[RMDB]
RNA sequence: GGGAACGACUCGAGUAGAGUCGAAAAAGCGUCGACGAACCUUCCAAGCUUCCAAAGCAGCAAAAGCUGAACCUUCCAACCUUCCAAUCUACUCGAGAGGAGGAGGAGGAGGAGGAGGAGGAAUUAAACACCGUGAAUUAUUCGUAAUUCACGGUGUAAAAGAAACAACAACAACAAC
Reactivity to 2A3 in 0.01 (KOAc 150mM, MgCl2 10mM, bicine 150mM(pH8.5), 24C), signal-to-noise 2, nucleotides 027 to 126: a010g080c060g050u040c020g010a050c030g030a080a090c000c000u020u030c030c020a050a040g010c020u030u000c030c030a100a050a030g050c020a000g000c010a010a140a200a060g000c010u020g010a080a070c020c010u060u060c020c020a080a080c010c010u020u020c020c010a010a060u000c000u060a030c010u040c010g020a040g010a020g090g030a030g030g020a040g000g050a060g000g000a060g020g070a000g020g060a040g000g040a040g000g000a020a010u140u110a130a100
Reactivity to DMS in 0.01 (KOAc 150mM, MgCl2 10mM, bicine 150mM(pH8.5), 24C), signal-to-noise 2, nucleotides 027 to 126: a060g040c030g000u000c040g000a110c050g010a130a100c020c020u010u010c020c020a120a150g020c030u020u000c030c040a050a130a080g010c040a070g030c110a080a090a060a090g020c020u000g000a100a130c010c010u010u010c000c020a090a150c050c030u000u000c010c010a130a240u000c020u000a030c010u000c020g030a040g000a200g000g010a150g010g000a130g010g000a110g000g000a150g000g010a090g000g000a110g000g000a100g000g010a300a080u000u000a040a070